This 207-nucleotide RNA was probed chemically with DMS and 2A3.
The data come from the RNA Mapping Database (RMDB), library OK3TST.
DMS adducts were read by reverse transcription with MarathonRT.
For 2A3, 7,011 sequencing reads were counted.
The DMS profile rests on 2,719 reads.
Conditions: 150 mM KOAc, 10 mM MgCl2 and 150 mM bicine (pH 8.5), 24 C.
2A3 adducts were read by reverse transcription with SuperScript II with manganese.

RNA sequence: GGGAACGACUCGAGUAGAGUCGAAAACGCAUGCGAGAGCAUGCGGCUAAGCUUCGGCUUAGUAAGAGCUACUUAGGAUUUUACGCUCCCCGGCGUGUCUCGAACCAUGCCGGGCCAAACCCAUAGGGCUGGCGGUCCCUGUGCGGUCAAAAUUCAAAAUUAGUGACGGAUUCGUCCGUCACUAAUUAAAAGAAACAACAACAACAAC
Reactivity to DMS in 0.01 (KOAc 150mM, MgCl2 10mM, bicine 150mM(pH8.5), 24C), signal-to-noise 2, nucleotides 027 to 156: c010g000c010a000u000g000c030g050a300g000a300g060c000a000u000g020c020g020g000c010u000a020a020g000c000u000u000c300g050g120c010u010u010a030g110u000a130a090g000a070g040c010u000a060c100u000u000a110g010g010a060u000u000u020u010a300c240g000c020u000c020c020c000c040g010g030c030g030u000g000u000c090u000c150g030a220a120c130c010a030u000g000c000c020g000g000g070c060c020a020a130a050c010c000c010a020u000a050g020g000g000c010u000g020g030c050g000g000u000c000c030c020u000g010u000g040c040g070g020u010c030a020a000a060a110u010u000c030a080a070
Reactivity to 2A3 in 0.01 (KOAc 150mM, MgCl2 10mM, bicine 150mM(pH8.5), 24C), signal-to-noise 3, nucleotides 027 to 156: c010g010c000a000u000g020c010g010a060g000a000g050c000a000u010g010c000g000g000c000u000a000a000g000c000u020u140c270g090g000c000u010u000a000g000u010a050a010g000a000g000c010u030a040c190u070u030a030g000g000a020u010u010u000u010a010c020g000c000u000c000c000c000c000g000g000c010g020u010g020u030c080u070c260g090a050a030c010c000a000u010g010c000c000g000g000g000c010c010a010a010a000c010c000c000a000u010a000g030g010g000c040u050g090g050c090g030g060u120c000c000c000u000g000u000g020c120g010g010u000c000a010a000a000a000u000u000c000a120a070